[RMDB]
Description: This 177-nucleotide RNA was probed chemically with 2A3 and DMS. Reactivities are given for positions 27 through 126. Conditions: 150 mM KOAc, 10 mM MgCl2 and 150 mM bicine (pH 8.5), 24 C. It was measured as part of the RMDB library 15KREP. For 2A3, 1,010 sequencing reads were counted. For DMS the reverse transcriptase was MarathonRT.
RNA sequence: GGGAACGACUCGAGUAGAGUCGAAAAGCAAACAUUCAGUUGCUCAGUUGGUUAGUUACCUUUCUGAACGCUGUAAUGUUAUUGCUGAUUCUAAGUCCUUCACACUUAUCUUUGGUGGCGUAGCUUACUCGUGGAAAUACUUCGGUAUUUCCACGAGAAAAGAAACAACAACAACAAC
Reactivity to 2A3 in 0.01 (KOAc 150mM, MgCl2 10mM, bicine 150mM(pH8.5), 24C), signal-to-noise 1, nucleotides 027 to 126: g000c000a000a020a000c000a000u000u000c000a040g010u130u210g300c020u000c010a010g000u020u030g040g000u000u090a050g040u090u250a060c010c000u000u100u050c020u020g030a000a000c000g000c000u030g070u260a000a000u000g000u010u020a130u070u000g000c000u020g010a080u090u050c030u050a120a000g080u030c020c000u030u110c020a050c020a030c000u010u170a070u190c040u150u090u100g070g000u010g030g000c090g050u040a040g010c010u080u050a030
Reactivity to DMS in 0.01 (KOAc 150mM, MgCl2 10mM, bicine 150mM(pH8.5), 24C), signal-to-noise 2, nucleotides 027 to 126: g000c010a020a040a050c000a010u000u000c010a000g000u000u040g050c020u000c000a000g040u000u000g010g000u000u000a180g010u010u000a080c000c000u000u000u000c000u000g010a000a020c000g000c000u010g000u010a000a000u000g010u010u000a070u000u000g020c000u010g010a220u000u000c070u010a070a140g000u000c050c030u000u000c080a100c090a020c070u000u010a080u010c120u000u000u010g010g010u000g000g010c090g010u000a060g020c050u000u000a170